[RMDB]
An RNA of 207 nucleotides, treated with 2A3 and DMS and read out base by base. Reactivities are given for positions 27 through 156. For DMS, 1,757 sequencing reads were counted. The RNA was probed in 150 mM KOAc, 10 mM MgCl2 and 150 mM bicine (pH 8.5) at 24 C. The data come from the RNA Mapping Database (RMDB), library OK3TST.
RNA sequence: GGGAACGACUCGAGUAGAGUCGAAAAACUGAUUUCUUAUUACUAAAUAAUUGAUGCCAAGAUUAAUCAAGAAAAAUCACAAGCUGUUUUCAUAAAUAAGGCCUACACUAUGGGAAUAGUUUCAGCCCUUCAGGAAAUGACAUAGUGCACUUCCUCAUAUUAGUAAUCGAUUCGUCGAUUACUAAUAAAAAGAAACAACAACAACAAC
Reactivity to 2A3 in 0.01 (KOAc 150mM, MgCl2 10mM, bicine 150mM(pH8.5), 24C), signal-to-noise 3, nucleotides 027 to 156: a000c040u020g030a040u100u100u030c020u110u160a180u220u080a160c080u140a260a180a300u170a180a180u200u090g040a090u150g020c020c030a060a040g020a170u130u160a080a050u130c040a020a040g040a050a090a050a040a010u070c030a040c040a210a030g030c040u050g070u070u060u060u090c020a010u070a180a100a000u090a160a070g000g020c010c010u050a020c030a020c070u030a030u040g020g010g050a060a080u090a070g030u020u030u010c050a050g020c020c010c000u050u050c020a010g000g020a020a000a050u020g010a010c000a040u140a070g070u120g160c010a000c020u020u030c010c000u060c030a040
Reactivity to DMS in 0.01 (KOAc 150mM, MgCl2 10mM, bicine 150mM(pH8.5), 24C), signal-to-noise 1, nucleotides 027 to 156: a140c040u010g020a040u010u000u000c030u000u000a070u030u010a300c040u050a140a050a260u010a030a070u000u000g020a070u010g000c040c160a180a190g010a060u000u020a070a080u000c070a070a110g000a000a060a040a090a090u010c000a080c080a050a100g020c030u000g020u000u000u010u000c060a050u000a020a010a070u000a050a060g000g010c140c040u000a030c180a040c080u010a040u000g000g020g020a100a030u000a010g030u010u000u000c230a050g000c020c050c020u000u030c030a130g050g020a070a020a050u000g010a020c000a170u000a100g010u030g000c000a060c000u000u000c020c010u020c090a210